About this RNA
Structure probing data (2A3 and DMS) for a 177-nucleotide construct. For 2A3 the reverse transcriptase was SuperScript II with manganese. The data come from the RNA Mapping Database (RMDB), library OK1LIB.

RNA sequence: GGGAACGACUCGAGUAGAGUCGAAAAGACGGAAAAGAUCGAACCUAAGAAGAUCAGGAAGUGUUAGCCGAAUCCUAGGGCUCCUAGGGACGCAUCGUCCGAUGCGAAAUAAACACUAACGUCGAAACAUAUGGCUCGGGUUCGCCCGAGCCAUAUGAAAAGAAACAACAACAACAAC
Reactivity to 2A3 in 0.01 (KOAc 150mM, MgCl2 10mM, bicine 150mM(pH8.5), 24C), signal-to-noise 1, nucleotides 027 to 126: g000a060c070g070g140a100a000a000a000g000a010u000c040g000a010a080c000c010u040a090a070g110a060a130g000a020u000c160a000g000g190a000a140g130u130g000u030u040a000g180c160c040g070a160a090u140c000c000u010a060g010g000g100c070u110c030c000u000a000g010g000g000a000c000g000c000a000u000c000g130u300c100c160g000a000u000g060c010g090a080a130a000u100a010a010a010c000a000c000u060a140a000c000g040u000c000g140a040a040a040
Reactivity to DMS in 0.01 (KOAc 150mM, MgCl2 10mM, bicine 150mM(pH8.5), 24C), signal-to-noise 1, nucleotides 027 to 126: g000a050c050g000g000a040a060a110a000g010a030u000c000g000a070a130c090c070u000a040a050g000a090a210g000a010u000c020a070g050g000a180a050g040u010g000u000u010a160g020c120c150g040a080a130u000c000c000u000a030g000g000g040c160u020c020c000u020a020g040g000g000a240c000g000c000a000u000c000g010u030c110c220g000a000u000g030c000g070a000a030a040u020a060a000a000c000a010c000u000a100a060c000g020u000c000g000a190a060a300
Description
For DMS the reverse transcriptase was MarathonRT. The reactions ran in a buffer of 150 mM KOAc, 10 mM MgCl2 and 150 mM bicine (pH 8.5), at 24 C. For 2A3, 419 sequencing reads were counted.